[RMDB]
RNA sequence: GGGAACGACUCGAGUAGAGUCGAAAACAGUGAUGGAAACAUCACUGAAAAACGUGCAAGCGCCGCACGAAAAAGUCGAUCGAAUACCGAUCGACAAGCGCUAAAGUCAUGCCGAAAGGCAUGACAACAUAUAUCCGGCAUUCGUGCCGGAUAUAUGAAAAGAAACAACAACAACAAC
Reactivity to 2A3 in 0.01 (KOAc 150mM, MgCl2 10mM, bicine 150mM(pH8.5), 24C), signal-to-noise 7, nucleotides 027 to 126: c000a000g010u000g000a000u000g000g030a030a030a020c010a000u000c000a000c000u000g000a010a000a000a010a000c010g000u000g010c020a080a040g000c010g010c020c020g040c040a010c100g260a070a000a010a000a000g000u000c000g000a000u000c000g010a050a050u130a300c140c010g000a000u000c000g000a000c000a000a000g000c000g000c010u040a110a020a020g000u010c000a000u000g000c000c000g080a110a020a010g000g000c000a000u000g000a000c000a000a010
Reactivity to DMS in 0.01 (KOAc 150mM, MgCl2 10mM, bicine 150mM(pH8.5), 24C), signal-to-noise 6, nucleotides 027 to 126: c020a000g000u000g000a000u000g000g010a140a120a180c010a010u010c000a010c000u000g000a040a050a060a140a220c000g000u020g010c020a130a040g020c000g040c000c300g000c010a010c000g000a020a040a010a020a010g000u000c000g000a020u000c000g010a300a170u020a190c220c000g010a010u000c000g000a000c000a010a070g010c000g010c010u000a130a090a070g010u000c000a010u000g010c000c000g010a080a090a150g000g000c010a000u000g010a000c010a070a090